[RMDB]
RNA sequence: GGGAACGACUCGAGUAGAGUCGAAAAGAUAUGGAAAGCCUACCCACCAAGGGGACGCGUUGAAACACUUUUUCCUCGGAAACGAGGAAAAAGUGUGGAGCGUCUUACUUGAGGGCUUUCCUAAGUCCGAUAUCUAAUACUUCGGUAUUAGAUAUCGAAAAGAAACAACAACAACAAC
Reactivity to 2A3 in 0.01 (KOAc 150mM, MgCl2 10mM, bicine 150mM(pH8.5), 24C), signal-to-noise 2, nucleotides 027 to 126: g040a080u300a200u300g000g000a020a010a000g000c010c000u160a300c300c020c010a010c010c010a010a010g050g000g010g010a000c000g000c010g050u140u070g000a020a030a010c000a000c000u000u000u000u000u000c010c000u000c000g000g030a140a160a050c010g020a040g040g000a000a000a000a000a020g010u000g000u010g000g010a010g000c010g020u010c000u010u050a300c000u010u000g000a020g000g010g000c000u000u000u000c000c000u010a050a010g140u120c100
Reactivity to DMS in 0.01 (KOAc 150mM, MgCl2 10mM, bicine 150mM(pH8.5), 24C), signal-to-noise 5, nucleotides 027 to 126: g010a150u010a150u000g010g000a010a010a010g000c010c000u010a190c030c020c010a300c160c000a010a000g010g000g000g000a000c010g020c000g010u010u010g000a300a140a030c000a000c010u000u000u000u000u000c010c010u000c010g000g000a110a060a160c000g010a010g030g010a000a010a000a000a000g010u000g010u000g000g000a130g020c000g020u000c010u010u000a070c000u000u000g000a080g010g000g010c000u000u000u000c010c010u000a010a100g010u010c110
An RNA of 177 nucleotides, treated with 2A3 and DMS and read out base by base.
For DMS, 6,025 sequencing reads were counted.
The reactions ran in a buffer of 150 mM KOAc, 10 mM MgCl2 and 150 mM bicine (pH 8.5), at 24 C.
The 2A3 profile rests on 8,416 reads.
For DMS the reverse transcriptase was MarathonRT.